An RNA of 170 nucleotides, treated with DMS and 2A3 and read out base by base. 2A3 adducts were read by reverse transcription with SuperScript II with manganese. The 2A3 profile rests on 39,877 reads. For DMS, 49,894 sequencing reads were counted. The reactions ran in a buffer of 150 mM KOAc, 10 mM MgCl2 and 150 mM bicine (pH 8.5), at 24 C. As a SHAPE reagent, 2A3 marks flexible, mostly unpaired nucleotides at the ribose 2'-OH. Reactivities are given for positions 27 through 129.
RNA sequence: GGGAACGACUCGAGUAGAGUCGAAAAUACUGAAUCUGUGCAAGAAGAAGCACAACCAGUAGAAGUACCUGUUGAAGAUAUUGCGCAGGUUGUCAUAGCUGACACCUUACAGGAAACUCCUGUUGUGAGACCGUUAGGUUCGCCUAACGGAAAAGAAACAACAACAACAAC
Reactivity to DMS in 0.01 (KOAc 150mM, MgCl2 10mM, bicine 150mM(pH8.5), 24C), signal-to-noise 8, nucleotides 027 to 129: u030a000c000u000g030a090a060u050c090u000g020u020g000c030a090a140g030a160a130g020a090a080g000c030a020c030a020a050c130c000a000g020u030a000g020a130a060g040u000a040c030c020u000g000u030u030g050a070a050g010a060u010a070u000u000g010c030g040c090a050g000g000u020u060g020u000c050a040u040a170g040c180u000g020a030c000a000c020c010u020u030a020c030a030g000g050a100a090a090c090u000c000c000u010g000u020u020g000u000g010a110g000a100
Reactivity to 2A3 in 0.01 (KOAc 150mM, MgCl2 10mM, bicine 150mM(pH8.5), 24C), signal-to-noise 9, nucleotides 027 to 129: u050a000c010u000g030a040a090u060c060u050g010u000g010c030a060a070g080a110a020g060a120a000g240c000a000c000a010a020c040c000a000g000u010a010g020a130a020g030u080a060c010c010u010g030u060u110g130a130a060g060a130u160a120u220u260g050c120g000c040a010g010g000u050u100g010u010c030a050u080a130g070c130u060g020a000c000a000c000c010u020u050a010c010a010g010g000a040a030a020c030u020c010c010u030g000u030u030g010u030g020a060g060a060